Conditions: 150 mM KOAc, 10 mM MgCl2 and 150 mM bicine (pH 8.5), 24 C. This 177-nucleotide RNA was probed chemically with 2A3. Values cover nucleotides 27 to 126.
[RMDB]
RNA sequence: GGGAACGACUCGAGUAGAGUCGAAAACAAAGCAGGGUCCCCAGCAUCCGGUUCCGGUAGAGCUGACGAGUUUAGUCCCGGUGCGGGUUGUCAGCGUGCAUGGUGACUUCUUCGAUACGGAACUGCAAUCCUGGACGACGUUCGCGUCGUCCAGGAUAAAAGAAACAACAACAACAAC
Reactivity to 2A3 in 0.01 (KOAc 150mM, MgCl2 10mM, bicine 150mM(pH8.5), 24C), signal-to-noise 1, nucleotides 027 to 126: c060a000a020a000g130c000a010g050g020g110u000c000c000c000c000a000g000c020a040u030c000c000g010g300u210u150c140c020g030g000u160a080g120a050g040c000u000g000a010c030g050a080g060u040u120u140a120g060u000c000c010c060g040g070u150g040c120g010g000g000u110u200g040u090c030a050g010c010g020u000g050c000a040u000g000g000u020g000a000c000u170u150c000u000u080c070g030a020u010a280c030g020g060a130a000c000u070g000c030a080